[RMDB]
RNA sequence: GGGAACGACUCGAGUAGAGUCGAAAAAAAAAAUAGAUCGUUCUAUUAACGAUCUCGCGCGGGUCGUCGGUGGUCGGCGAGCCCACGCACGAACUUACUCGCGCGUAAGUUAAUAAAUCGCCAAAAACGAUGUAUAAUUAUUCGUAAUUAUACAUCGAAAAGAAACAACAACAACAAC
Reactivity to DMS in 0.01 (KOAc 150mM, MgCl2 10mM, bicine 150mM(pH8.5), 24C), signal-to-noise 5, nucleotides 027 to 126: a000a010a050a050a040a050u000a020g010a000u000c000g020u000u000c270u010a140u010u010a030a010c000g010a010u000c000u000c040g010c010g000c000g010g020g000u000c030g010u000c090g040g010u000g010g000u010c060g020g000c010g010a020g010c180c000c010a010c000g000c110a050c030g000a090a040c130u010u010a140c020u000c020g010c030g020c040g010u000a060a080g010u010u010a050a050u010a020a010a040u000c020g010c010c010a070a060a060a060a160
Reactivity to 2A3 in 0.01 (KOAc 150mM, MgCl2 10mM, bicine 150mM(pH8.5), 24C), signal-to-noise 4, nucleotides 027 to 126: a000a010a000a010a000a010u110a020g000a010u010c010g000u050u010c130u170a300u300u180a090a010c000g000a000u000c010u000c020g000c000g010c000g000g000g020u040c010g010u010c070g060g030u080g020g020u050c050g020g000c010g000a020g040c010c020c000a000c000g040c000a010c010g020a030a000c020u200u180a040c010u040c010g000c000g000c000g000u010a030a010g000u000u020a020a010u050a040a060a040u020c010g020c020c010a040a090a010a010a040